This 177-nucleotide RNA was probed chemically with 2A3 and DMS. Conditions: 150 mM KOAc, 10 mM MgCl2 and 150 mM bicine (pH 8.5), 24 C. The 2A3 profile rests on 8,199 reads. Source: RMDB library OK2TST, as collected in RNAgym.

[RMDB]
RNA sequence: GGGAACGACUCGAGUAGAGUCGAAAAGGCCGUCCGCGUCCGGCGCAUGAGCGGGGCGCGCCCGCCGUGCGUCGCGCACCCCGGCGGGGCGCGAGUCCGCACGGGGAGUCCGCACGAAAUGCGCUGACGACUAUGGAGUAUUCGUACUCCAUAGUCGAAAAGAAACAACAACAACAAC
Reactivity to 2A3 in 0.01 (KOAc 150mM, MgCl2 10mM, bicine 150mM(pH8.5), 24C), signal-to-noise 3, nucleotides 027 to 126: g050g010c030c000g030u040c020c030g040c020g080u040c050c030g040g000c000g000c020a010u040g030a040g090c010g010g010g090g020c150g000c040g020c010c000c000g050c030c010g000u000g000c020g030u050c020g000c000g000c000a050c000c000c010c020g200g040c170g040g000g000g010c040g010c030g020a010g060u050c050c050g000c030a110c020g010g000g000g000a010g020u030c030c020g040c020a030c060g060a040a090a070u060g000c000g000c010u020g030a030
Reactivity to DMS in 0.01 (KOAc 150mM, MgCl2 10mM, bicine 150mM(pH8.5), 24C), signal-to-noise 5, nucleotides 027 to 126: g020g010c040c030g010u000c030c050g010c050g010u000c070c050g020g000c010g020c010a010u000g010a130g020c010g010g010g000g010c130g020c300g000c010c010c000g000c020c010g010u000g010c010g000u000c040g000c060g000c050a080c000c010c010c040g020g020c130g000g010g000g000c010g000c100g000a090g010u010c240c020g000c010a070c000g010g000g000g010a060g000u000c130c010g000c030a070c070g000a060a110a060u000g010c010g010c010u000g010a200